This 177-nucleotide RNA was probed chemically with 2A3 and DMS.
[RMDB]
RNA sequence: GGGAACGACUCGAGUAGAGUCGAAAAGUUUUCUGUUCUUUUUUUGGCAUAAACAAACAAAUCGUUGGUUUGUGCUAUACCACAUGUUAAUAUCAGCAAGUGGGGUAUUCUUUGAGAUUUGGAGUUAAAUAAAUCUUUAUUUCGAUAAAGAUUUAUUAAAAGAAACAACAACAACAAC
Reactivity to 2A3 in 0.01 (KOAc 150mM, MgCl2 10mM, bicine 150mM(pH8.5), 24C), signal-to-noise 4, nucleotides 027 to 126: g020u020u020u060u040c050u030g110u080u130c030u120u110u100u050u020u100u220g020g000c000a010u000a000a010a000c010a020a040a000c010a040a260a190u240c100g000u020u010g070g010u000u010u000g000u000g000c010u010a020u030a040c000c010a000c010a020u030g030u120u110a170a100u110a130u300c050a020g040c010a040a100g010u030g010g000g050g000u070a120u190u100c030u050u110u130g160a120g020a150u090u110u180g040g040a050g020u070u100a060
Reactivity to DMS in 0.01 (KOAc 150mM, MgCl2 10mM, bicine 150mM(pH8.5), 24C), signal-to-noise 1, nucleotides 027 to 126: g010u010u010u000u010c020u010g010u010u020c000u000u030u010u050u020u030u000g000g000c000a000u000a010a020a020c000a040a000a000c010a080a140a080u030c220g000u000u000g000g010u010u000u010g030u000g010c000u000a050u010a120c020c000a020c010a050u000g010u010u000a110a100u050a070u030c120a060g030c060a060a070g000u010g010g000g000g000u000a030u000u010c010u020u000u000g010a120g000a080u000u010u000g000g010a170g000u020u050a010
It was measured as part of the RMDB library RFM100.
The 2A3 profile rests on 1,125 reads.
For DMS the reverse transcriptase was MarathonRT.